Structure probing data (2A3) for a 177-nucleotide construct. Source: RMDB library RFM100, as collected in RNAgym.

[RMDB]
RNA sequence: GGGAACGACUCGAGUAGAGUCGAAAAGCAAACGGGCGCUGGCUUUAGGAAAGAAUGUUCCAUGACCGUAAAUACAGGCACCCCACAGUGCUUGCUAUCGCGGCAAUAUCGCCAGUGGUGCUGUCGUCUUGGAGCCUCUUUUCGAAGAGGCUCCAAGAAAAGAAACAACAACAACAAC
Reactivity to 2A3 in 0.01 (KOAc 150mM, MgCl2 10mM, bicine 150mM(pH8.5), 24C), signal-to-noise 2, nucleotides 027 to 126: g080c040a020a020a050c040g010g030g010c010g000c000u010g000g000c000u130u130u130a100g010g000a040a030a060g100a150a200u300g090u110u010c010c010a010u040g190a270c010c000g070u040a070a070a070u010a010c030a000g010g000c010a010c000c010c000c010a100c000a030g060u010g050c000u000u020g000c010u040a020u040c070g000c000g000g000c000a030a030u180a070u300c000g000c040c000a010g110u070g030g010u100g040c000u040g030u090c010g000u000

Conditions: 150 mM KOAc, 10 mM MgCl2 and 150 mM bicine (pH 8.5), 24 C.